[RMDB]
RNA sequence: GGGAACGACUCGAGUAGAGUCGAAAACCCCCAAGUUUCGACUUGGGGGAAUUAAAAUCAGCGGUAAAUAAUUAGGUCGCGUUACCGCUGAACGCGAGCAUAGAGCAAUGCGCUUCGGCGCAUUGAACCUAUGAUUGCGAUUCGUCGCAAUCAUAGGAAAAGAAACAACAACAACAAC
Reactivity to 2A3 in 0.01 (KOAc 150mM, MgCl2 10mM, bicine 150mM(pH8.5), 24C), signal-to-noise 4, nucleotides 027 to 126: c010c000c000c000c000a000a010g000u010u050u130c150g100a020c010u000u010g000g000g010g000g010a020a010u170u130a050a040a010a090u030c010a000g000c000g110g090u160a060a090a090u140a090a130u250u230a110g150g050u040c020g020c010g010u010u010a090c020c000g000c000u000g000a010a000c020g000c010g030a020g030c060a120u100a130g120a020g090c000a010a000u010g000c000g000c000u030u030c230g100g000c000g000c010a000u000u000g000a000a000
Reactivity to DMS in 0.01 (KOAc 150mM, MgCl2 10mM, bicine 150mM(pH8.5), 24C), signal-to-noise 2, nucleotides 027 to 126: c000c010c010c030c000a000a000g000u010u000u000c160g020a040c000u000u000g000g000g000g000g000a000a000u010u010a040a020a090a090u000c010a010g020c010g000g010u000a060a050a050u010a070a110u010u010a160g030g000u000c010g000c060g010u000u000a060c000c000g000c000u000g020a010a010c010g000c020g010a060g010c200a120u010a080g040a130g020c000a000a010u000g000c000g030c000u000u010c170g010g000c000g020c000a000u000u000g000a070a100
The record gives the reactivity of an RNA of 177 nucleotides to 2A3 and DMS. Conditions: 150 mM KOAc, 10 mM MgCl2 and 150 mM bicine (pH 8.5), 24 C. Reactivities are rounded to 0.1 and cut off at 0 and 3. For 2A3, 4,788 sequencing reads were counted. Source: RMDB library M2PK50, as collected in RNAgym. For DMS, 2,759 sequencing reads were counted. For 2A3 the reverse transcriptase was SuperScript II with manganese. For DMS the reverse transcriptase was MarathonRT.